[RMDB]
RNA sequence: GGGAACGACUCGAGUAGAGUCGAAAAUUGCCACACAAGAGCAAGCAGCGCGCUUAGUUUUCAAGAGGCGCCACAAGUUGCCAGCCAUUUUUUAGAGCAGCCACAGCCAGCGCGCUUUUCAGCUUAGCAGCUUUUGCGCUUUUCAUUGCUUUUGCAGCGGAAGCUAUUAUUUCGAUAAUAGCUUCCGAAAAGAAACAACAACAACAAC
Reactivity to DMS in 0.01 (KOAc 150mM, MgCl2 10mM, bicine 150mM(pH8.5), 24C), signal-to-noise 1, nucleotides 027 to 156: u000u010g010c040c050a180c120a100c070a060a040g000a060g020c010a060a080g000c140a090g020c030g050c010g060c030u020u000a050g020u000u010u010u000c110a040a110g010a120g030g010c040g080c010c050a080c110a040a130g030u000u000g020c000c020a280g000c020c040a050u000u000u000u000u000u000a150g030a140g000c040a110g030c020c040a120c030a090g030c070c040a090g030c050g010c010g040c020u000u030u000u000c060a170g000c000u000u000a050g020c030a090g010c050u000u010u000u000g030c010g020c010u000u010u010u010c070a050u020u000g010c000u020u000u000u000g010c110a150g010
Reactivity to 2A3 in 0.01 (KOAc 150mM, MgCl2 10mM, bicine 150mM(pH8.5), 24C), signal-to-noise 3, nucleotides 027 to 156: u080u120g060c000c010a040c000a000c000a010a010g010a000g030c010a040a000g010c030a020g000c030g020c000g010c030u040u030a040g010u090u070u120u200c060a080a040g030a040g060g030c020g030c020c040a050c020a040a040g020u020u020g010c000c020a030g010c020c010a100u060u140u050u080u100u290a070g030a020g030c020a010g010c030c020a030c020a020g020c070c010a010g000c010g010c020g070c000u050u010u000u030c010a000g010c010u030u050a020g000c010a020g010c010u180u140u190u290g030c040g000c000u160u110u130u140c080a140u100u090g000c010u070u070u060u130g040c050a060g110
An RNA of 207 nucleotides, treated with DMS and 2A3 and read out base by base. Reactivities are rounded to 0.1 and cut off at 0 and 3. The reactions ran in a buffer of 150 mM KOAc, 10 mM MgCl2 and 150 mM bicine (pH 8.5), at 24 C. 2A3 adducts were read by reverse transcription with SuperScript II with manganese.